Description:
Conditions: 150 mM KOAc, 10 mM MgCl2 and 150 mM bicine (pH 8.5), 24 C. The record gives the reactivity of an RNA of 177 nucleotides to 2A3 and DMS.

RNA sequence: GGGAACGACUCGAGUAGAGUCGAAAAUAUGCAGCCUCGUGUAUCGAAAGGGAAUCAGGUUAAUAUUCCUGAACCGAGACGUGGAUAAUAUGUGGUAACACAACCGACCCAGGAGACGCUAGCGUGUGCAUAAUUAAUACUUCGGUAUUAAUUAUGCAAAAGAAACAACAACAACAAC
Reactivity to 2A3 in 0.01 (KOAc 150mM, MgCl2 10mM, bicine 150mM(pH8.5), 24C), signal-to-noise 9, nucleotides 027 to 126: u240a050u080g050c030a020g030c010c010u020c030g040u050g030u060a100u070c050g080a120a040a060g040g020g040a030a120u030c010a010g020g040u070u110a120a040u080a120u170u060c000c000u010g010a020a030c020c010g010a020g010a020c040g020u060g020g040a040u060a170a060u110a150u130g060u030g030g050u130a150a010c010a000c010a050a030c010c010g050a060c000c010c000a010g000g030a030g010a010c030g010c030u030a040g030c020g050u070g030u020
Reactivity to DMS in 0.01 (KOAc 150mM, MgCl2 10mM, bicine 150mM(pH8.5), 24C), signal-to-noise 9, nucleotides 027 to 126: u010a050u010g010c070a090g010c020c010u010c040g020u000g020u010a080u010c030g020a060a110a240g000g000g010a050a070u010c100a040g000g010u010u030a090a100u020a130u010u010c000c010u000g010a040a110c090c010g000a050g010a060c050g010u000g000g000a070u020a070a070u020a060u010g020u000g000g010u020a080a110c040a030c050a080a120c070c050g000a090c020c010c010a070g000g010a080g010a060c050g000c040u000a040g010c070g030u000g010u020